[RMDB]
RNA sequence: GGGAACGACUCGAGUAGAGUCGAAAAGACUCGCACAGGUCUAUUUCUUGUGCCCUGGACCAGGACCUCGGGUCGCUGGGAUGGAAAUCUCUCGCCGUUAAGAGUGCUCAACCACUACCCGAAAGGAGUGAGAUGUUCUCUUCGGAGAACAUCUCACAAAAGAAACAACAACAACAAC
Reactivity to 2A3 in 0.01 (KOAc 150mM, MgCl2 10mM, bicine 150mM(pH8.5), 24C), signal-to-noise 2, nucleotides 027 to 126: g000a000c000u000c000g040c000a000c000a020g000g000u010c070u110a180u020u200u060c010u000u010g030u010g000c000c000c000u090g070g130a160c040c010a000g010g010a020c000c000u000c010g000g000g000u000c000g000c030u000g030g000g040a110u060g000g050a010a080a170u020c010u000c020u020c020g130c080c030g030u020u130a110a000g010a000g040u050g010c050u000c090a050a040c050c010a060c070u110a110c020c000c020g030a090a110a060g150g050a100

An RNA of 177 nucleotides, treated with 2A3 and read out base by base. The RNA was probed in 150 mM KOAc, 10 mM MgCl2 and 150 mM bicine (pH 8.5) at 24 C. For 2A3 the reverse transcriptase was SuperScript II with manganese.